[RMDB]
RNA sequence: GGGAACGACUCGAGUAGAGUCGAAAAGAUAUGGAACCAUAUUGACAUGAUUAUGGUUCGGAAACGAACCCUAAUCAACAGCAAUGAUGGUUCCUAAGUCAAACUCCUCUGCUUCGGCAGAGGAGAAGGUAUGUCAACUCUUCGGAGUUGACAUACCAAAAGAAACAACAACAACAAC
Reactivity to DMS in 0.01 (KOAc 150mM, MgCl2 10mM, bicine 150mM(pH8.5), 24C), signal-to-noise 1, nucleotides 027 to 126: g000a000u010a150u010g000g000a020a020c000c010a000u000a040u000u000g000a000c170a210u000g000a030u010u000a000u000g000g000u000u000c000g010g000a040a030a080c000g010a030a000c000c000c090u000a000a000u000c010a050a080c300a150g010c010a020a010u060g010a010u010g000g010u000u000c000c000u000a020a060g000u010c030a170a120a190c010u000c000c000u010c000u000g030c000u010u030c220g020g000c000a000g020a010g000g000a000g010a010a010
Reactivity to 2A3 in 0.01 (KOAc 150mM, MgCl2 10mM, bicine 150mM(pH8.5), 24C), signal-to-noise 2, nucleotides 027 to 126: g000a020u030a000u060g000g000a000a000c010c000a000u010a030u010u070g120a110c200a300u300g010a020u010u030a000u040g020g000u010u020c000g000g000a030a000a000c010g010a010a000c040c000c040u030a010a000u000c070a160a180c130a110g030c000a000a000u290g110a010u000g210g000u020u010c010c000u000a030a020g020u010c000a040a110a250c020u010c010c000u000c010u020g000c000u040u100c170g300g000c000a000g030a020g030g000a000g010a000a010
Source: RMDB library TTRDES, as collected in RNAgym. Chemical mapping of a 177-nucleotide RNA with DMS and 2A3. Values cover nucleotides 27 to 126. The RNA was probed in 150 mM KOAc, 10 mM MgCl2 and 150 mM bicine (pH 8.5) at 24 C. For DMS, 1,073 sequencing reads were counted.